The record gives the reactivity of an RNA of 177 nucleotides to 2A3 and DMS. The RNA was probed in 150 mM KOAc, 10 mM MgCl2 and 150 mM bicine (pH 8.5) at 24 C. For 2A3 the reverse transcriptase was SuperScript II with manganese.

RNA sequence: GGGAACGACUCGAGUAGAGUCGAAAAAUGCUGGAGGCAGCUCAAGUGACCAGCAUCAGCCUGAUAGUGUGGGGAGGGUUUUUGUGAAGCAACAAGGUUGAUAAAUAACAGGGUUCUUACUCCAACCACUACCACGUUAUUUCGAUAACGUGGUAGUAAAAGAAACAACAACAACAAC
Reactivity to 2A3 in 0.01 (KOAc 150mM, MgCl2 10mM, bicine 150mM(pH8.5), 24C), signal-to-noise 2, nucleotides 027 to 126: a000u060g010c010u010g000g030a060g130g000c030a040g000c120u060c150a120a090g060u040g110a040c010c000a000g040c000a030u030c010a010g060c010c010u100g060a110u060a140g090u100g030u090g020g000g000g000a080g000g000g030u060u030u040u160u060g090u050g030a050a030g030c010a010a030c030a060a030g020g000u010u040g020a090u070a170a120a010u120a050a020c050a020g000g030g000u030u050c020u060u030a050c020u020c020c000a020a060c020c030
Reactivity to DMS in 0.01 (KOAc 150mM, MgCl2 10mM, bicine 150mM(pH8.5), 24C), signal-to-noise 5, nucleotides 027 to 126: a050u010g010c040u010g010g010a080g010g010c060a090g000c080u010c140a100a100g020u010g000a220c020c030a040g000c030a040u010c080a120g010c030c030u000g010a100u010a060g010u010g040u000g010g000g000g010a100g000g010g030u000u000u000u000u000g000u000g000a050a100g010c070a060a060c090a050a070g010g010u000u000g000a070u010a050a040a110u010a070a080c130a060g000g000g000u000u000c070u010u010a080c080u000c060c040a060a090c120c080